[RMDB]
RNA sequence: GGGAACGACUCGAGUAGAGUCGAAAAAUGCCGCAUUCAGCGACGGUCACUCUAGUGGGCAACUGUCGAUCUAGCGUUGACAUCUACAUACUAUAUAGUAAUACCAAUACUCAAGACUACGAAACGGGGAUUAGGGACCAUUCGUGGUCCCUAAUCCAAAAGAAACAACAACAACAAC
Reactivity to 2A3 in 0.01 (KOAc 150mM, MgCl2 10mM, bicine 150mM(pH8.5), 24C), signal-to-noise 2, nucleotides 027 to 126: a010u110g010c030c010g000c030a060u000u010c100a010g000c030g070a060c030g090g030u000c010a090c000u010c060u160a130g070u130g000g000g080c020a180a050c070u010g000u010c000g000a020u050c070u130a000g010c000g100u020u010g030a100c000a000u010c020u040a090c020a070u170a030c000u050a040u080a030u070a230g160u120a000a090u000a150c000c030a090a110u000a020c000u000c050a000a120g040a090c000u100a030c110g050a160a030a000c070g000g000
Background:
This 177-nucleotide RNA was probed chemically with 2A3. As a SHAPE reagent, 2A3 marks flexible, mostly unpaired nucleotides at the ribose 2'-OH.